[RMDB]
RNA sequence: GGGAACGACUCGAGUAGAGUCGAAAAGAUAUGGAACUCGAUAGUUCGUUGAAAUCGGAAACGAUGGAGAACGGGUCGAGGUUCCUAAGUCAAAAGGUGAAUGCUACGUUCGCGUAGCAUUCACCAAGUAUCAAUGAUCCUUCGGGAUCAUUGAUACAAAAGAAACAACAACAACAAC
Reactivity to 2A3 in 0.01 (KOAc 150mM, MgCl2 10mM, bicine 150mM(pH8.5), 24C), signal-to-noise 2, nucleotides 027 to 126: g010a000u070a020u150g020g010a000a000c000u000c030g000a010u040a070g090u060u130c010g020u110u020g020a040a030a000u000c000g000g060a050a040a060c020g000a010u000g050g010a080g030a020a010c020g300g090g000u010c030g030a030g060g000u000u000c010c000u000a120a010g060u040c070a040a060a020a130g010g000u010g000a000a000u000g020c000u000a000c030g040u010u080c300g010c000g130u000a000g010c000a000u000u000c010a010c000c010a000a010
Reactivity to DMS in 0.01 (KOAc 150mM, MgCl2 10mM, bicine 150mM(pH8.5), 24C), signal-to-noise 3, nucleotides 027 to 126: g000a040u010a300u020g000g000a000a020c000u000c000g010a010u000a270g010u000u000c000g000u010u000g010a090a170a010u010c010g000g000a140a060a150c010g020a020u000g010g010a140g000a020a010c000g000g020g020u000c000g000a010g000g000u010u000c000c000u010a050a080g000u010c020a060a060a090a090g000g030u000g000a020a000u000g010c000u000a000c000g020u010u020c270g030c010g020u010a010g000c000a000u000u000c000a000c010c000a000a030